[RMDB]
RNA sequence: GGGAACGACUCGAGUAGAGUCGAAAAGUAUUGCUUCAGGAAUACCUCCAGUUUAUGGAGUUUUUUCAAAAAUUCAUGCUGAAAUUCCUCGACUAGUAAUAUUACUCUGAAUUUCUCAUUGGCUACAUAUAAUGGGUCAGUUCGCUGACCCAUUAUAAAAAGAAACAACAACAACAAC
Reactivity to DMS in 0.01 (KOAc 150mM, MgCl2 10mM, bicine 150mM(pH8.5), 24C), signal-to-noise 1, nucleotides 027 to 126: g000u000a000u020u000g020c030u000u010c030a000g010g010a010a010u000a200c090c080u010c070c010a000g010u000u020u010a020u000g010g010a010g040u040u000u000u000u020u090c130a050a040a000a050a040u010u000c030a020u000g000c030u010g010a010a270a060u000u000c010c000u000c150g030a050c300u000a000g000u000a020a030u000a040u000u000a070c060u010c100u000g000a090a090u000u000u000c060u010c010a100u000u000g010g010c090u000a040c110a060
Structure probing data (DMS) for a 177-nucleotide construct.
The data come from the RNA Mapping Database (RMDB), library OK2TST.
For DMS, 719 sequencing reads were counted.
Conditions: 150 mM KOAc, 10 mM MgCl2 and 150 mM bicine (pH 8.5), 24 C.
Reactivities are given for positions 27 through 126.